[RMDB]
RNA sequence: GGGAACGACUCGAGUAGAGUCGAAAAGAGCUACAUGAGAGUCCUCCGGCCCCUGAAUGCGGCUAAUCUCAACCACGGAGCAGGUAGUCACAAACCAGUGAUUUGCCUGUCGUAACGCGAAAGUCUGCGAAUCUAUUAUCUUCGGAUAAUAGAUUCGAAAAGAAACAACAACAACAAC
Reactivity to DMS in 0.01 (KOAc 150mM, MgCl2 10mM, bicine 150mM(pH8.5), 24C), signal-to-noise 4, nucleotides 027 to 126: g000a050g000c020u000a030c050a050u000g020a170g000a160g000u010c010c020u000c090c030g010g030c030c010c020c050u000g010a090a050u000g010c070g010g020c030u000a080a050u010c030u010c050a100a120c160c080a070c060g020g010a120g010c000a010g000g010u000a020g010u000c000a000c000a070a150a170c300c250a070g000u000g000a010u000u000u000g050c000c000u010g020u010c060g010u010a070a080c090g010c040g000a070a040a080g000u000c040u000g020
Reactivity to 2A3 in 0.01 (KOAc 150mM, MgCl2 10mM, bicine 150mM(pH8.5), 24C), signal-to-noise 4, nucleotides 027 to 126: g020a010g010c030u060a040c050a130u170g050a050g010a000g150u020c020c000u000c040c020g090g000c040c020c000c020u040g120a160a040u130g020c010g000g000c010u050a050a070u080c030u010c050a060a060c040c030a050c060g040g020a090g030c010a010g000g010u010a010g000u010c000a000c020a030a220a120c110c070a040g020u000g010a020u170u050u170g000c000c020u000g020u020c010g020u040a060a010c050g000c020g090a150a020a010g050u040c060u110g050
This 177-nucleotide RNA was probed chemically with DMS and 2A3. DMS adducts were read by reverse transcription with MarathonRT.